The record gives the reactivity of an RNA of 177 nucleotides to 2A3 and DMS. The data come from the RNA Mapping Database (RMDB), library OK2TST. For DMS the reverse transcriptase was MarathonRT. Reactivities are given for positions 27 through 126.
RNA sequence: GGGAACGACUCGAGUAGAGUCGAAAACGGCCCAACACAAACUCUUAAACUUCUUAAAACGUUAUGAGAUUGUUUUAAAGCUCAUCAGCUAUUGUUAGCGUUAGUGUGUUUUAUGUGUGGCCCAAGACCUAGUCGAAGUAUUCGUACUUCGACUAGGAAAAGAAACAACAACAACAAC
Reactivity to 2A3 in 0.01 (KOAc 150mM, MgCl2 10mM, bicine 150mM(pH8.5), 24C), signal-to-noise 5, nucleotides 027 to 126: c040g030g000c010c010c010a100a010c040a010c000a010a120a040c000u070c020u100u220a130a140a060c000u110u060c030u110u210a120a160a050a030c050g010u020u040a030u060g000a020g000a060u030u080g050u080u210u040u130a050a030a010g010c000u010c040a070u030c060a040g010c030u040a030u170u300g220u190u070a000g010c030g050u040u080a060g020u020g000u010g010u040u020u050u040a080u050g070u000g030u070g000g000c000c000c000a030a020g060a030
Reactivity to DMS in 0.01 (KOAc 150mM, MgCl2 10mM, bicine 150mM(pH8.5), 24C), signal-to-noise 4, nucleotides 027 to 126: c220g000g010c010c000c040a080a060c090a030c040a100a060a090c040u000c020u000u000a060a060a040c020u000u010c120u000u020a090a080a110a100c210g010u000u000a040u000g000a030g010a090u000u000g000u000u000u000u000a030a060a080g010c010u000c050a010u000c090a140g000c010u000a040u000u010g010u000u000a010g010c050g000u020u010a110g010u000g010u000g000u000u000u000u000a070u010g010u010g020u000g010g010c020c000c150a060a110g000a200